[RMDB]
RNA sequence: GGGAACGACUCGAGUAGAGUCGAAAAACGAUGCGAAACGGGUUCCCUCCGACCCCCGGGGGACCGAUACCCUGGCGGGGUGCGCCCCCGUACGGGUGGGCCGCAUAGCCGACAGCCGUCGCAACCACAAUGGGUCUAACUUCGGUUAGACCCAUUGAAAAGAAACAACAACAACAAC
Reactivity to DMS in 0.01 (KOAc 150mM, MgCl2 10mM, bicine 150mM(pH8.5), 24C), signal-to-noise 1, nucleotides 027 to 126: a070c070g000a070u020g000c090g060a050a090a060c070g020g000g040u020u000c030c000c010u010c050c050g000a300c000c010c000c030c140g000g000g000g000g000a030c030c020g000a160u000a090c020c090c000u000g000g000c060g000g010g020g000u020g010c060g010c040c000c000c000c000g030u000a060c240g020g000g020u010g000g010g050c090c040g000c020a030u000a110g000c030c020g000a020c070a050g000c060c070g030u000c000g000c040a080a150c020c050a160
An RNA of 177 nucleotides, treated with DMS and read out base by base.